[RMDB]
RNA sequence: GGGAACGACUCGAGUAGAGUCGAAAACUGGGCAACAUUCCGAGGGGACCGUCCCCCUCGGUAAUGGCGAAUGGGACCCAGAUCUCUCUCUAGCUUCCGAUAGAGAAGCGAGAGAAAGCUGGCUCUCCACUUAGUACUCCUUCGGGAGUACUAAGUGAAAAGAAACAACAACAACAAC
Reactivity to 2A3 in 0.01 (KOAc 150mM, MgCl2 10mM, bicine 150mM(pH8.5), 24C), signal-to-noise 2, nucleotides 027 to 126: c000u060g050g150g000c020a140a030c000a150u020u000c010c000g010a010g000g000g000g020a050c050c050g130u220c010c000c010c000c000u000c000g000g000u000a000a010u010g000g010c030g090a100a100u110g000g000g030a000c010c010c010a010g010a040u030c020u010c000u030c010u030c050u070a050g000c020u010u020c010c020g190a240u160a270g130a000g020a010a000g010c000g000a000g000a000g000a010a010a000g010c010u000g010g000c000u010c000u020c030
Reactivity to DMS in 0.01 (KOAc 150mM, MgCl2 10mM, bicine 150mM(pH8.5), 24C), signal-to-noise 2, nucleotides 027 to 126: c020u000g000g010g030c070a150a150c010a030u000u000c000c010g000a020g010g000g010g010a130c160c240g000u020c140c010c000c000c000u000c000g010g010u020a000a020u000g000g020c140g030a100a100u000g020g010g000a050c210c000c000a010g010a060u000c010u000c010u000c000u000c010u000a130g010c000u010u000c010c010g010a190u000a120g000a160g020a010a020g010c000g010a020g000a020g000a000a020a020g020c010u000g010g000c270u000c020u000c010
This 177-nucleotide RNA was probed chemically with 2A3 and DMS. Conditions: 150 mM KOAc, 10 mM MgCl2 and 150 mM bicine (pH 8.5), 24 C. In probing experiments dimethyl sulfate is read out at A N1 and C N3, which are open when not base-paired. It was measured as part of the RMDB library 15KREP.